RNA sequence: GGGAACGACUCGAGUAGAGUCGAAAAGACUGAUUCGUCAGUCAAGAGUACCUUUGUGCCUUGACAUGCUCUGGAGAAGAGGAGGCCCAUUGGGCUACCCACCCUCGUAACAGAGCAACAGCAAGGCACUCUGGUUAAUGCGGCAUUUCGAUGCCAAAUGGUCUUAAAAGUUCGCUUUUAAGACCAUAAAAGAAACAACAACAACAAC
Reactivity to 2A3 in 0.01 (KOAc 150mM, MgCl2 10mM, bicine 150mM(pH8.5), 24C), signal-to-noise 7, nucleotides 027 to 156: g010a000c010u010g000a030u080u130c250g060u020c100a010g000u000c030a020a040g130a030g110u110a040c010c000u010u010u010g010u000g010c000c000u030u020g050a170c020a090u050g000c000u000c000u010g040g020a040g010a080a000g000a010g000g000a020g000g010c040c000c050a280u190u300g010g000g000c000u050a060c050c090c040a090c020c000c000u000c000g020u010a040a030c000a000g010a000g020c000a000a000c000a000g040c000a000a000g000g000c000a000c000u000c000u000g020g000u060u110a100a070u190g130c070g030g000c020a010u070u100u120c230g100a010u010g000c000c000a000a080
Reactivity to DMS in 0.01 (KOAc 150mM, MgCl2 10mM, bicine 150mM(pH8.5), 24C), signal-to-noise 3, nucleotides 027 to 156: g020a080c010u010g020a070u000u010c250g020u010c010a040g020u000c010a070a120g010a210g030u010a040c010c000u000u010u010g000u000g020c030c010u000u000g020a050c080a300u010g010c030u000c010u000g040g010a140g000a160a300g000a050g030g010a230g040g010c010c000c030a260u020u010g040g040g010c010u000a040c040c010c050a300c120c010c000u000c020g020u000a120a270c020a010g000a020g000c000a010a030c100a180g010c010a030a040g020g020c030a000c000u000c020u000g000g040u000u000a050a040u000g020c060g000g010c030a050u010u000u010c180g020a090u000g020c010c010a010a160